[RMDB]
RNA sequence: GGGAACGACUCGAGUAGAGUCGAAAAUGGGAGAGCUUUAAUUCUGAUUCACUCAGUGGCUUCAUGCGUUGGUAAUGGGUCAUUCAGAACACAGCCUGGAGGUCAAGCUUGAGUAGCAGGUGACGUAUAGGAUGGGGUGAUUCGUCACCCCAUCCUAAAAAGAAACAACAACAACAAC
Reactivity to DMS in 0.01 (KOAc 150mM, MgCl2 10mM, bicine 150mM(pH8.5), 24C), signal-to-noise 2, nucleotides 027 to 126: u020g000g000g000a080g010a060g000c020u000u000u030a090a050u000u000c030u000g000a050u060u000c100a090c010u000c070a000g050u030g010g000c010u000u000c120a050u020g000c110g000u000u020g000g000u030a100a030u030g020g000g000u030c070a030u000u010c030a140g020a140a050c140a080c080a070g010c000c050u000g010g030a030g010g020u020c020a050a100g020c050u060u000g000a090g030u000a090g000c070a080g010g000u030g020a060c110g060u010a200
Reactivity to 2A3 in 0.01 (KOAc 150mM, MgCl2 10mM, bicine 150mM(pH8.5), 24C), signal-to-noise 2, nucleotides 027 to 126: u120g080g030g030a150g010a000g000c010u050u030u060a040a020u130u050c010u000g010a080u040u020c050a000c010u030c070a050g010u010g030g000c020u030u030c110a110u120g120c040g110u080u160g070g080u070a150a040u060g020g000g030u050c000a050u140u000c020a090g000a050a000c060a000c000a080g000c000c000u000g010g020a000g010g010u070c020a060a000g070c050u080u070g100a010g040u060a000g000c000a030g000g000u030g050a020c050g100u170a020
Annotation:
Conditions: 150 mM KOAc, 10 mM MgCl2 and 150 mM bicine (pH 8.5), 24 C. Chemical mapping of a 177-nucleotide RNA with DMS and 2A3. High DMS reactivity at an A or C suggests that its Watson-Crick edge is free. Reactivities are given for positions 27 through 126. The DMS profile rests on 2,332 reads. The data come from the RNA Mapping Database (RMDB), library OK1LIB. For DMS the reverse transcriptase was MarathonRT.